[RMDB]
RNA sequence: GGGAACGACUCGAGUAGAGUCGAAAAAAAAGAUAUGGAGCACUUGUCAGCUCGACCAUGGAGCAGCUCGGAAACGAGCUGAACUACUCCAUGUGUCGAGCUUGGAUUUAGUGCUCCUAAGUCAAAACGUGAAUAAUGGGUUCGCCCAUUAUUCACGAAAAGAAACAACAACAACAAC
Reactivity to DMS in 0.01 (KOAc 150mM, MgCl2 10mM, bicine 150mM(pH8.5), 24C), signal-to-noise 1, nucleotides 027 to 126: a080a040a080a070g000a030u010a300u000g000g020a000g010c000a030c000u000u000g010u000c000a050g000c010u000c000g000a030c010c000a010u000g020g020a010g060c000a000g030c000u010c010g020g010a130a100a170c010g010a010g020c000u020g000a000a000c050u050a300c080u000c010c000a030u000g000u010g030u000c000g010a010g010c010u010u000g070g000a000u010u000u000a010g050u000g010c000u010c010c000u000a040a070g010u020c080a150a050a100a110